This 177-nucleotide RNA was probed chemically with 2A3 and DMS.
The DMS profile rests on 1,200 reads.
The 2A3 profile rests on 1,383 reads.
DMS adducts were read by reverse transcription with MarathonRT.
It was measured as part of the RMDB library OK2TRN.
For 2A3 the reverse transcriptase was SuperScript II with manganese.

[RMDB]
RNA sequence: GGGAACGACUCGAGUAGAGUCGAAAAAGGCUAUUUCUCAUUUCAUUUCCUACACUCAUAAAGGGAGUUCAACACGUUCGGAUAGUGUGUCGAGUGAAUAUCACAUCGAGUCACCAUCAGUGAGCGAGUAAGGUGUGACUUUCGAGUCACACCUUACAAAAGAAACAACAACAACAAC
Reactivity to 2A3 in 0.01 (KOAc 150mM, MgCl2 10mM, bicine 150mM(pH8.5), 24C), signal-to-noise 2, nucleotides 027 to 126: a000g100g010c070u090a140u080u070u010c050u020c040a070u100u150u040c030a040u050u040u050c010c010u010a000c020a020c040u060c030a080u200a110a220a000g110g030g000a050g040u010u120c050a080a060c030a000c110g010u020u020c030g030g010a010u030a040g030u020g000u030g190u070c020g000a000g000u030g050a130a160u270a150u260c030a000c020a260u010c000g030a000g130u030c010a000c040c000a020u030c000a000g160u040g200a010g000c020g020a000
Reactivity to DMS in 0.01 (KOAc 150mM, MgCl2 10mM, bicine 150mM(pH8.5), 24C), signal-to-noise 2, nucleotides 027 to 126: a110g000g030c090u000a050u010u000u000c030u010c000a120u000u000u030c050a030u000u010u000c030c050u010a070c210a070c050u010c070a120u030a160a090a170g010g000g030a070g030u000u000c150a080a120c170a130c040g020u000u010c040g020g000a030u000a010g020u000g010u000g000u000c020g030a020g020u000g000a080a160u000a120u030c000a010c000a120u000c010g000a020g020u000c000a000c000c020a000u000c000a120g030u030g010a010g000c020g020a100